[RMDB]
RNA sequence: GGGAACGACUCGAGUAGAGUCGAAAAAUGAGAUCCCAUCUUGCACACUGUGCUUAUUUGAGAUUCUCAUGCCUCCUACUUGGAGAGAUCUGGACUAGAAGUCAGGGCAUCUGACUCUGCCAGCCACAAAACGUACAAGGCUUCGGCCUUGUACGAACAAAACAUUCCUCUUCGGAGGAAUGUUUUGAAAAGAAACAACAACAACAAC
Reactivity to DMS in 0.01 (KOAc 150mM, MgCl2 10mM, bicine 150mM(pH8.5), 24C), signal-to-noise 2, nucleotides 027 to 156: a080u030g020a030g010a050u010c000c000c000a030u000c090u000u010g020c000a030c040a220c170u010g020u000g020c010u000u000a030u010u000u000g010a030g030a030u010u000c020u000c010a040u000g000c130c060u000c000c010u000a070c170u000u000g000g000a140g000a150g010a070u000c000u000g020g010a060c060u000a060g000a120a070g010u000c000a040g020g020g020c180a110u000c010u010g010a030c000u010c030u000g010c030c010a050g000c050c020a110c080a070a030a080a120c010g040u010a020c000a030a000g010g000c010u000u000c300g050g040c000c000u010u000g000u000a010c000g000a030a100
Reactivity to 2A3 in 0.01 (KOAc 150mM, MgCl2 10mM, bicine 150mM(pH8.5), 24C), signal-to-noise 5, nucleotides 027 to 156: a010u010g000a000g000a000u020c020c000c000a010u020c030u020u060g020c020a020c050a090c170u300g010u010g020c040u200u180a100u030u070u040g040a060g000a040u290u060c010u000c010a010u020g030c010c000u000c000c020u090a200c080u150u270g030g010a040g000a010g000a090u050c010u000g000g040a100c050u100a110g030a150a010g080u000c000a000g050g080g170c090a150u130c110u000g000a000c010u000c000u010g010c000c000a030g040c010c010a130c040a020a150a100a030c010g000u000a000c000a000a000g000g000c000u040u130c170g090g000c000c000u010u000g000u000a000c000g000a000a000
The record gives the reactivity of an RNA of 207 nucleotides to DMS and 2A3. The reactions ran in a buffer of 150 mM KOAc, 10 mM MgCl2 and 150 mM bicine (pH 8.5), at 24 C. For 2A3 the reverse transcriptase was SuperScript II with manganese.